[RMDB]
Source: RMDB library 15KLIB, as collected in RNAgym. The record gives the reactivity of an RNA of 170 nucleotides to DMS and 2A3.
RNA sequence: GGGAACGACUCGAGUAGAGUCGAAAAGUUUCUUGAUCUUCUUCUUGGCCUUCCGGAGAUCCUUCUCGAGAUCAUCCACUAACUUUCUUGCAUUGACCCACUGCUCGAGGACUCCUUCUCUUCCCGCUGACGCGCGGGUUCGCCCGCGCGAAAAGAAACAACAACAACAAC
Reactivity to DMS in 0.01 (KOAc 150mM, MgCl2 10mM, bicine 150mM(pH8.5), 24C), signal-to-noise 1, nucleotides 027 to 129: g120u010u020u010c020u010u020g020a110u050c010u010u020c100u000u000c080u020u020g040g030c040c010u000u000c090c080g080g020a080g090a070u020c000c090u000u000c060u030c060g020a100g020a090u000c020a210u000c070c000a000c100u010a050a100c100u020u040u040c000u090u000g010c060a100u130u000g010a210c040c050c020a140c060u010g010c060u090c050g070a020g020g080a100c100u040c000c080u040u020c050u010c020u000u010c010c000c040g010c040u040g010a150
Reactivity to 2A3 in 0.01 (KOAc 150mM, MgCl2 10mM, bicine 150mM(pH8.5), 24C), signal-to-noise 3, nucleotides 027 to 129: g000u010u000u000c000u020u040g060a010u030c020u010u000c000u030u020c000u040u070g090g010c030c000u030u000c030c020g040g000a060g000a010u020c000c010u030u110c060u060c020g110a100g010a100u010c030a030u040c050c030a150c040u090a130a060c050u120u130u090c010u030u210g000c060a110u030u150g000a050c000c000c010a030c040u030g000c000u000c000g000a020g000g030a030c020u000c010c000u050u010c010u000c030u030u010c000c000c000g000c040u060g010a040
The reactions ran in a buffer of 150 mM KOAc, 10 mM MgCl2 and 150 mM bicine (pH 8.5), at 24 C. Values are in units of 0.01, from 0 to 300, in steps of 10. Values cover nucleotides 27 to 129.